[RMDB]
RNA sequence: GGGAACGACUCGAGUAGAGUCGAAAAACAGGAUCUAAACUAACAGUUAAAAGCCUCAAAUUCAGAACAUUCGGAUCUAUACCUUUCGUCAAUAUCAACAACCAAACCUACAAUUUCUCUGUCCUUCCACACUACAGCGUACUCUCACAUUACAUCCGAUACUGCGCAUAUUCGUAUGCGCAGUAUCAAAAGAAACAACAACAACAAC
Reactivity to DMS in 0.01 (KOAc 150mM, MgCl2 10mM, bicine 150mM(pH8.5), 24C), signal-to-noise 1, nucleotides 027 to 156: a070c050a120g020g000a090u040c010u010a010a070a130c040u020a060a090c080a030g000u000u020a090a070a040a060g040c110c020u020c010a040a060a140u000u020c070a150g000a020a040c020a050u000u010c000g040g010a060u010c070u010a030u010a050c020c030u000u010u000c030g020u000c050a050a100u000a070u010c050a050a030c040a050a140c020c020a000a010a000c020c020u000a060c060a050a070u000u000u000c060u000c030u000g020u000c010c020u010u030c030c000a020c020a060c010u010a030c050a100g040c030g030u010a050c070u010c010u000c010a070c050a050u000u020a100c070a160u050c040c050
Reactivity to 2A3 in 0.01 (KOAc 150mM, MgCl2 10mM, bicine 150mM(pH8.5), 24C), signal-to-noise 4, nucleotides 027 to 156: a010c040a020g050g030a050u060c020u160a070a040a110c030u070a060a020c030a020g030u080u060a080a190a020a030g040c000c020u110c050a010a030a030u060u020c020a020g010a050a010c010a030u020u020c020g070g060a080u040c010u010a020u030a030c000c000u020u030u030c030g070u030c040a000a000u020a010u120c050a020a070c010a030a020c040c000a020a020a000c010c010u040a050c070a070a080u020u100u020c040u020c020u030g050u050c010c010u060u000c020c000a030c010a020c030u110a040c030a030g010c020g030u040a030c010u030c030u040c050a020c040a070u110u290a050c020a050u200c050c040